[RMDB]
RNA sequence: GGGAACGACUCGAGUAGAGUCGAAAAGGUGCUAGGAACACGGGGGCCCAGUGGAGCCAUGGGAUGCUCCUCCCGAUUCCGUCCAACCCCUUCCCCCGAGGGUCGCCCAGGAAUGGCGGGACCCACUAUAGGCAGAGCUUCGGCUCUGCCAAAAGAAACAACAACAACAAC
Reactivity to 2A3 in 0.01 (KOAc 150mM, MgCl2 10mM, bicine 150mM(pH8.5), 24C), signal-to-noise 3, nucleotides 027 to 129: g080g000u110g090c040u070a040g000g000a040a010c090a040c140g000g000g000g000g000c000c020c020a050g010u110g090g010a030g020c040c010a190u090g040g020g020a050u160g030c040u000c000c000u050c000c000c000g000a010u040u000c000c000g000u030c020c010a050a040c060c000c000c000u020u000c010c000c000c000c020g050a160g000g000g000u000c030g180c070c020c000a030g060g150a110a140u130g030g000c050g060g020g010a000c000c090c000a010c000u130a090u040a080
Reactivity to DMS in 0.01 (KOAc 150mM, MgCl2 10mM, bicine 150mM(pH8.5), 24C), signal-to-noise 3, nucleotides 027 to 129: g010g020u010g000c110u000a070g060g000a000a020c120a070c060g050g010g000g020g010c010c080c000a000g050u020g000g000a100g070c070c080a240u000g060g000g000a300u020g020c070u060c010c000u000c000c070c000g030a270u090u050c010c020g020u000c070c160a090a240c070c010c000c020u000u060c000c000c010c040c000g010a070g000g080g000u000c020g060c040c030c000a070g090g000a290a090u000g030g000c100g040g010g010a050c000c010c030a070c050u080a190u070a130

Structure probing data (2A3 and DMS) for a 170-nucleotide construct. The data come from the RNA Mapping Database (RMDB), library 15KLIB. The reactions ran in a buffer of 150 mM KOAc, 10 mM MgCl2 and 150 mM bicine (pH 8.5), at 24 C. 2A3 adducts were read by reverse transcription with SuperScript II with manganese. The 2A3 profile rests on 5,698 reads.